[RMDB]
RNA sequence: GGGAACGACUCGAGUAGAGUCGAAAAGAGACAUCCUGGAAGGGGAAAGAGGAGGGUGGAAGAAAAAGGGGUGGGCCCCCCCGAUCCGAGGGGCCCGACUGCCAAGUUUGGAGAGCACCUCGGGCCGUUAGGCGACGGUUCGCCGUCGCCAAAAGAAACAACAACAACAAC
Reactivity to 2A3 in 0.01 (KOAc 150mM, MgCl2 10mM, bicine 150mM(pH8.5), 24C), signal-to-noise 2, nucleotides 027 to 129: g080a000g020a070c000a100u070c000c040u000g030g040a020a090g040g030g010g060a060a090a020g050a020g070g020a020g000g010g000u070g030g020a130a080g030a030a020a000a000a000g010g020g000g020u100g010g000g020c000c000c000c000c000c000c000g040a010u000c000c020g000a030g020g000g010g000c000c000c000g020a010c010u020g070c010c030a070a010g030u030u090u130g090g020a100g010a050g030c030a030c020c010u000c000g000g010g050c000c000g050u050u150a050
Reactivity to DMS in 0.01 (KOAc 150mM, MgCl2 10mM, bicine 150mM(pH8.5), 24C), signal-to-noise 2, nucleotides 027 to 129: g030a120g030a100c160a090u010c030c020u070g000g000a060a050g000g020g100g030a100a020a080g010a080g060g040a080g010g000g000u020g000g000a060a050g030a080a010a060a110a070g000g010g000g000u020g000g000g000c050c000c000c050c000c100c050g030a140u080c000c000g020a070g030g000g000g100c000c070c010g120a040c100u000g030c190c220a170a050g020u000u050u050g120g020a130g030a040g030c000a030c030c070u080c040g000g000g090c080c020g040u200u000a120